This 177-nucleotide RNA was probed chemically with 2A3 and DMS. 2A3 adducts were read by reverse transcription with SuperScript II with manganese. Reactivities are rounded to 0.1 and cut off at 0 and 3. The RNA was probed in 150 mM KOAc, 10 mM MgCl2 and 150 mM bicine (pH 8.5) at 24 C. The DMS profile rests on 1,173 reads. The data come from the RNA Mapping Database (RMDB), library RFMREP.
[RMDB]
RNA sequence: GGGAACGACUCGAGUAGAGUCGAAAAUAGAUAAAAUACCAUUCGCCGGAAUACUGCGAUCAUUGUGGUCAUCAUCUUGAAGAUACUGAAGUUCAGGACUAUGAACGUAGGCAAGAAGCUGAAAUUCGCAUUAAGUACGGUUCGCCGUACUUAAUGCAAAAGAAACAACAACAACAAC
Reactivity to 2A3 in 0.01 (KOAc 150mM, MgCl2 10mM, bicine 150mM(pH8.5), 24C), signal-to-noise 2, nucleotides 027 to 126: u070a000g050a040u110a130a090a050a050u100a080c000c000a010u020u090c000g010c060c030g080g040a040a070u100a160c050u040g000c010g030a020u110c070a080u080u190g050u040g070g070u050c000a070u000c000a010u000c030u020u100g030a030a020g030a070u080a170c110u130g070a100a030g030u030u000c010a020g030g070a060c050u080a120u270g000a010a000c030g010u030a010g050g040c030a020a030g110a140a020g020c020u050g040a080a090a040u090u060c040
Reactivity to DMS in 0.01 (KOAc 150mM, MgCl2 10mM, bicine 150mM(pH8.5), 24C), signal-to-noise 2, nucleotides 027 to 126: u030a140g020a110u000a050a070a070a130u000a100c020c000a090u000u000c050g010c040c070g020g000a180a050u010a120c080u010g020c050g000a020u000c110a060u000u000g030u010g000g000u000c120a050u000c090a050u000c060u000u030g010a070a110g010a090u030a110c110u000g020a070a140g010u010u000c000a030g000g020a020c270u000a050u000g010a020a020c090g020u010a150g000g010c020a040a040g010a130a080g000c020u010g000a000a110a080u020u010c160